[RMDB]
RNA sequence: GGGAACGACUCGAGUAGAGUCGAAAAUGUCAGUGAGAGUGAGGGAGCUUGCUUGGCGAAGGCUCACGGACAGAUGUGGGCACUGUAUUUCUUCCAUAGACGUGACAUGCGUUUAGCUUACGCCGCCGGGUGGAGAAGGUUUCGACCUUCUCCACCCAAAAGAAACAACAACAACAAC
Reactivity to DMS in 0.01 (KOAc 150mM, MgCl2 10mM, bicine 150mM(pH8.5), 24C), signal-to-noise 1, nucleotides 027 to 126: u000g000u020c020a060g050u000g010a080g010a090g010u000g010a140g000g000g000a080g010c060u000u000g000c050u010u000g000g030c070g020a070a100g010g000c010u010c020a080c050g020g000a060c120a120g000a120u010g000u000g000g000g000c020a100c100u000g010u010a040u010u000u010c100u000u000c080c060a140u020a060g020a060c050g030u020g000a110c210a070u010g010c020g000u000u000u000a060g000c110u000u020a120c100g020c040c070g040c120c160
Reactivity to 2A3 in 0.01 (KOAc 150mM, MgCl2 10mM, bicine 150mM(pH8.5), 24C), signal-to-noise 1, nucleotides 027 to 126: u140g020u040c010a040g000u000g090a050g010a000g090u110g020a050g000g060g020a040g020c010u060u060g000c000u090u000g030g000c040g040a030a030g070g000c010u000c030a020c000g020g030a050c100a080g020a050u110g070u110g040g030g070c040a010c060u110g020u120a150u000u100u020c030u110u100c000c000a010u020a050g010a040c030g070u040g150a150c030a100u210g020c030g010u060u050u070a010g010c000u060u040a020c060g000c040c000g020c030c040